[RMDB]
RNA sequence: GGGAACGACUCGAGUAGAGUCGAAAACGUUCACCUUUUGCUUUACAUGUAUCGCGAAAUGUAAACACUUAUUCAACCAAUUGAUGUCUUCCCGUUAACAAGGCCGAGCUUAAAUUUAAGCUCGGUUUUGGCUUAAACAGUUCGCUGUUUAAGCCAAAAAAGAAACAACAACAACAAC
Reactivity to 2A3 in 0.01 (KOAc 150mM, MgCl2 10mM, bicine 150mM(pH8.5), 24C), signal-to-noise 4, nucleotides 027 to 126: c070g010u020u010c030a160c020c030u000u000u040u040g010c020u070u070u010a030c020a100u150g050u100a060u100c040g010c010g110a020a030a030u050g000u050a030a020a020c010a020c020u040u060a040u150u000c000a020a040c040c010a120a170u010u100g020a060u130g030u040c010u000u000c000c010c000g030u080u130a080a020c030a050a010g060g010c000c000g010a000g000c010u050u010a100a210a260u280u300u100a040a000g000c000u000c000g000g000u000u000
Reactivity to DMS in 0.01 (KOAc 150mM, MgCl2 10mM, bicine 150mM(pH8.5), 24C), signal-to-noise 3, nucleotides 027 to 126: c150g010u000u000c030a020c020c050u010u020u010u040g010c020u010u000u010a010c050a090u000g040u020a030u010c070g040c030g000a010a040a030u010g010u000a070a030a040c030a090c090u010u010a070u010u030c090a080a070c020c080a090a110u030u050g000a050u020g020u000c040u000u000c000c000c030g000u080u030a070a090c120a060a090g000g010c010c000g000a010g000c000u000u000a000a200a150u030u030u000a010a010g000c000u000c000g010g000u000u000